[RMDB]
RNA sequence: GGGAACGACUCGAGUAGAGUCGAAAAAAAGUGGUUUCCUUCAUGUUUUGUUAUUCCUCCAUACAUACAAGUUUUACCACCUGUAACUUUACCUACAUUAUCUUUGGAUGAAAAAUAGCAGUUUACACCUCAGGCUAAAAUUCGUUUUAGCCUGAGGAAAAGAAACAACAACAACAAC
Reactivity to DMS in 0.01 (KOAc 150mM, MgCl2 10mM, bicine 150mM(pH8.5), 24C), signal-to-noise 1, nucleotides 027 to 126: a020a050a050g060u010g000g030u000u030u000c020c010u000u000c120a120u000g000u000u010u010u020g020u000u020a120u010u000c030c020u000c080c060a130u000a090c050a090u020a110c190a050a060g000u000u000u000u000a090c040c030a030c080c020u000g070u000a080a020c010u000u000u000a060c080c000u020a060c120a070u000u000a080u000c050u000u000u020g020g020a070u000g000a040a040a020a080a060u000a060g000c080a020g010u000u010u000a160c210a130

The record gives the reactivity of an RNA of 177 nucleotides to DMS. The reactions ran in a buffer of 150 mM KOAc, 10 mM MgCl2 and 150 mM bicine (pH 8.5), at 24 C.